[RMDB]
Source information: An RNA of 207 nucleotides, treated with 2A3 and DMS and read out base by base. Source: RMDB library M2RFPK, as collected in RNAgym.
RNA sequence: GGGAACGACUCGAGUAGAGUCGAAAACAUAAGACCUCAGAGCUAAUGAGCCACAUACCUACCCAAGGUGAAAGCUCCUUCUCUGGCAAUGUGUAACUCAUGAUUCUCAUGACCCCUGGUUGGAGAGCGCGCUAACACGCCUUCGGGCGUGUUAGAACCAUGUCUGAUACUUCGGUAUCAGACAUGGAAAAGAAACAACAACAACAAC
Reactivity to 2A3 in 0.01 (KOAc 150mM, MgCl2 10mM, bicine 150mM(pH8.5), 24C), signal-to-noise 2, nucleotides 027 to 156: c010a010u130a090a080g080a110c020c040u100c020a010g000a020g030c100u120a100a050u040g000a000g010c010c000a040c030a110u210a020c010c010u040a090c000c000c080a040a060g000g030u020g060a100a020a000g000c010u020c000c010u070u040c030u020c020u020g050g000c040a070a110u120g000u040g020u090a060a100c020u020c040a010u050g030a130u290u030c130u000c070a040u040g020a070c000c000c000c050u010g050g010u070u020g020g020a090g010a020g050c070g020c000g000c080u000a000a000c000a000c000g010c000c020u010u070c190g050g010g000c000g030u000g010u000u000a000g000a000a000
Reactivity to DMS in 0.01 (KOAc 150mM, MgCl2 10mM, bicine 150mM(pH8.5), 24C), signal-to-noise 1, nucleotides 027 to 156: c080a070u000a080a240g010a090c110c010u010c020a030g010a110g030c190u010a090a110u040g010a020g000c020c000a100c030a170u010a030c030c010u010a110c140c080c090a110a070g040g000u020g000a120a100a100g010c040u000c010c110u000u020c000u010c030u000g000g020c030a100a060u000g000u060g030u020a040a020c000u000c010a000u000g000a190u010u000c040u030c010a090u000g010a110c070c030c030c020u000g050g000u000u000g010g040a100g000a100g000c050g030c100g000c000u000a020a050c030a050c000g010c000c010u000u010c300g080g050g060c000g040u010g010u010u010a010g010a070a180

The RNA was probed in 150 mM KOAc, 10 mM MgCl2 and 150 mM bicine (pH 8.5) at 24 C.